[RMDB]
RNA sequence: GGGAACGACUCGAGUAGAGUCGAAAAUUGCAACGGGACUGGCAUAGCUUCAGUGGUGCGACACUGCUAGACCACUUCGCACGUGAGUCUAUGGUGGUGCACAGUGCGCAGCAUUUCCGCUGCAUCUAUCCUAUUCGGAGCAAGAUAGUCAUGACCACACCCGGAUGCAUUUCGAUGCAUCCGGGUGAAAAGAAACAACAACAACAAC
Reactivity to 2A3 in 0.01 (KOAc 150mM, MgCl2 10mM, bicine 150mM(pH8.5), 24C), signal-to-noise 1, nucleotides 027 to 156: u040u010g030c000a000a000c000g040g130g000a070c080u040g110g000c030a050u050a120g060c090u150u190c040a100g120u170g120g000u000g010c010g040a030c070a000c010u040g050c080u010a010g070a010c010c000a000c100u140u190c060g000c010a100c050g000u090g040a100g000u050c060u070a140u120g000g000u000g000g010u070g010c000a010c000a140g010u050g020c060g020c140a090g000c030a070u050u030u020c040c000g000c000u000g000c010a000u000c010u070a070u050c000c000u010a020u000u050c020g090g000a090g000c030a070a000g040a010u150a000g070u130c040a200u090g070a030c000c000a070